[RMDB]
RNA sequence: GGGAACGACUCGAGUAGAGUCGAAAAGAUAUGGAUCUGUACGAAUCUUUAUGUACAAUGAUGUCGGAAACGAUUGAGUACAUUGAGACUAUACAGAUCCUAAGUCAAAGGAGGGUUCGCCCUCCAAUCCCGUUCUAUUCUUCGGAAUAGAACGGGAAAAAGAAACAACAACAACAAC
Reactivity to DMS in 0.01 (KOAc 150mM, MgCl2 10mM, bicine 150mM(pH8.5), 24C), signal-to-noise 1, nucleotides 027 to 126: g000a020u000a300u020g000g030a000u000c000u000g000u000a020c190g000a080a170u000c000u000u010u010a000u000g030u010a020c000a090a190u000g000a070u010g010u010c000g040g000a190a050a130c050g020a000u000u000g010a130g020u000a010c000a020u010u000g000a020g020a020c070u020a270u000a000c000a000g000a000u020c000c010u020a000a030g000u000c000a140a110a160g000g010a000g020g000g000u000u010c290g000c030c000c000u000c000c000a050a090
Reactivity to 2A3 in 0.01 (KOAc 150mM, MgCl2 10mM, bicine 150mM(pH8.5), 24C), signal-to-noise 1, nucleotides 027 to 126: g030a000u060a030u140g000g010a000u000c010u020g030u010a030c090g150a200a300u050c000u010u080u020a010u020g020u000a020c040a110a300u230g040a040u150g040u020c000g050g070a100a130a050c000g010a010u050u060g030a020g020u000a000c000a000u010u010g000a000g000a040c010u020a000u000a060c000a010g010a010u020c000c000u000a020a000g000u000c020a070a070a000g000g010a000g020g000g030u090u100c190g180c000c000c000u000c000c000a010a010

Background
Structure probing data (DMS and 2A3) for a 177-nucleotide construct. DMS adducts were read by reverse transcription with MarathonRT.